[RMDB]
RNA sequence: GGGAACGACUCGAGUAGAGUCGAAAAGAGAGCCUGCCGGACGAGCCGCGUACAGAGAUGAGUUCGUGCAAUACCUCCUCGUGGCUGCGUGACCAUCACAUGGAUGCGGAUAUCCAUUCGUAUGCCAGAUUUAAUCCGGUUUCGACCGGAUUAAAUCAAAAGAAACAACAACAACAAC
Reactivity to 2A3 in 0.01 (KOAc 150mM, MgCl2 10mM, bicine 150mM(pH8.5), 24C), signal-to-noise 2, nucleotides 027 to 126: g090a000g010a000g060c000c030u010g040c050c030g060g000a080c010g010a020g040c020c010g000c010g010u060a030c030a030g060a000g010a100u060g030a040g090u100u130c040g000u030g050c010a040a020u070a160c010c020u070c000c030u060c080g080u050g040g010c010u010g000c000g020u020g030a040c030c010a030u050c010a050c060a150u060g010g000a020u040g000c010g030g000a010u030a060u080c060c020a020u020u070c020g010u050a030u150g100c020c010a010
Reactivity to DMS in 0.01 (KOAc 150mM, MgCl2 10mM, bicine 150mM(pH8.5), 24C), signal-to-noise 2, nucleotides 027 to 126: g010a160g010a090g010c070c030u000g010c000c020g000g000a040c060g020a130g010c010c010g020c010g010u000a080c120a090g010a140g000a050u000g000a100g010u000u010c060g020u000g000c020a090a100u010a120c050c020u010c090c140u000c110g020u010g010g020c070u010g020c020g020u010g000a120c020c050a050u000c040a040c160a220u000g000g010a040u000g000c020g000g000a050u000a080u000c150c100a060u000u000c040g000u010a020u010g000c010c050a090